An RNA of 207 nucleotides, treated with 2A3 and DMS and read out base by base.
Conditions: 150 mM KOAc, 10 mM MgCl2 and 150 mM bicine (pH 8.5), 24 C.
For 2A3, 964 sequencing reads were counted.
The data come from the RNA Mapping Database (RMDB), library OK3TST.
DMS adducts were read by reverse transcription with MarathonRT.
2A3 adducts were read by reverse transcription with SuperScript II with manganese.
RNA sequence: GGGAACGACUCGAGUAGAGUCGAAAAACAUCUUAACUUCGAUCUACCCCGAAGGCCGGCAUGCGUGAUCGCCACGCGAGCCUGAAACAUGAAAAUCUAUCAAGCACGAUCCGACCAAACCCACAGCCGAUUCGGUCCGCGAGCGGGAAGUCAAUGCAAUCAAGUCCAAAUUCGUUUGGACUUGAUUAAAAGAAACAACAACAACAAC
Reactivity to 2A3 in 0.01 (KOAc 150mM, MgCl2 10mM, bicine 150mM(pH8.5), 24C), signal-to-noise 2, nucleotides 027 to 156: a000c020a100u050c020u180u160a070a090c000u020u000c010g030a050u000c010u090a070c030c000c010c010g020a020a010g060g010c080c000g030g000c020a080u110g030c020g020u020g020a090u170c070g070c160c000a020c000g000c000g030a040g000c000c000u000g040a060a060a000c030a010u120g120a000a050a060a040u010c040u080a070u100c100a050a010g020c020a000c060g000a030u010c010c000g070a070c070c000a060a060a110c000c000c000a070c080a050g030c010c000g080a080u170u100c060g050g050u040c020c000g050c020g030a000g020c000g000g050g010a000a000g000u070c070a060a030u160g090c130
Reactivity to DMS in 0.01 (KOAc 150mM, MgCl2 10mM, bicine 150mM(pH8.5), 24C), signal-to-noise 1, nucleotides 027 to 156: a100c020a080u010c080u000u000a060a130c090u000u000c030g020a120u000c030u000a240c000c030c020c050g000a080a070g000g010c040c040g020g030c050a090u010g000c050g050u010g000a160u000c160g040c100c030a030c050g030c020g020a070g000c010c020u030g010a130a090a090c070a100u000g000a090a040a090a110u020c040u000a120u010c040a070a200g030c000a060c050g000a110u010c010c020g000a080c030c020a030a110a100c000c030c010a080c020a160g000c010c040g000a240u000u010c050g000g030u000c010c000g040c040g040a080g010c080g000g030g010a030a040g010u020c040a040a130u000g030c170